Chemical mapping of a 177-nucleotide RNA with DMS and 2A3. The reactions ran in a buffer of 150 mM KOAc, 10 mM MgCl2 and 150 mM bicine (pH 8.5), at 24 C. It was measured as part of the RMDB library OK2TST. DMS adducts were read by reverse transcription with MarathonRT.
RNA sequence: GGGAACGACUCGAGUAGAGUCGAAAAUCUGGCAGCGUCUCUUGACACUGAUGCGUGCCGGCCGGUCCGUGCACCGGCAGUUCUGUUGCGGACAUUGUGGAGUGCAUGUUGACGAGCCUGCGGCUCACUAUUACCGUAUGUUCGCAUACGGUAAUAGAAAAGAAACAACAACAACAAC
Reactivity to DMS in 0.01 (KOAc 150mM, MgCl2 10mM, bicine 150mM(pH8.5), 24C), signal-to-noise 9, nucleotides 027 to 126: u010c040u010g010g030c010a110g010c020g010u000c010u000c110u000u010g010a120c140a070c100u000g010a060u000g010c030g010u000g020c010c030g010g010c030c030g010g010u000c020c140g010u000g010c070a050c010c010g000g000c020a040g010u010u000c050u000g010u010u010g020c090g000g010a060c060a060u000u000g030u000g010g010a090g010u000g010c030a030u000g010u000u010g010a070c070g010a100g010c020c010u000g010c090g010g010c020u000c070a190
Reactivity to 2A3 in 0.01 (KOAc 150mM, MgCl2 10mM, bicine 150mM(pH8.5), 24C), signal-to-noise 9, nucleotides 027 to 126: u040c020u030g040g030c040a040g050c040g040u020c030u000c010u090u220g080a080c030a020c090u060g010a060u060g020c110g060u060g000c010c000g010g000c000c010g040g020u020c040c080g130u100g020c050a010c020c010g050g000c010a010g000u060u040c030u100g250u190u130g070c080g020g020a040c030a070u100u150g020u040g060g050a100g020u030g030c010a030u070g030u110u140g100a050c030g020a020g030c000c030u080g060c090g040g020c040u030c040a050